[RMDB]
RNA sequence: GGGAACGACUCGAGUAGAGUCGAAAAGCAAAAACUUUGUAUUUGAUGAGCGAAUGGGCGAACGAAUCUCGGAUGAGGUUAUCGCGCAUUGCCAUCAGUGCGGCGCGUCCUGCGAUAGCCAUACCAAUCGCAGUCCUGCAUUCGUGCAGGACUGCGAAAAAGAAACAACAACAACAAC
Reactivity to 2A3 in 0.01 (KOAc 150mM, MgCl2 10mM, bicine 150mM(pH8.5), 24C), signal-to-noise 1, nucleotides 027 to 126: g000c100a080a140a050a050a050c020u240u300u020g130u040a020u000u160u050g050a000u000g000a000g150c060g130a000a000u000g000g020g140c000g060a070a130c090g100a280a000u000c000u000c090g200g300a300u280g000a080g000g000u000u000a040u000c000g020c010g020c030a000u000u000g000c000c050a000u030c010a000g000u000g000c050g000g000c030g000c050g000u010c000c000u000g010c010g000a030u020a100g060c040c020a080u080a170c000c000a050a140
Overview:
Chemical mapping of a 177-nucleotide RNA with 2A3. Source: RMDB library OK1LIB, as collected in RNAgym. The 2A3 profile rests on 404 reads. The RNA was probed in 150 mM KOAc, 10 mM MgCl2 and 150 mM bicine (pH 8.5) at 24 C.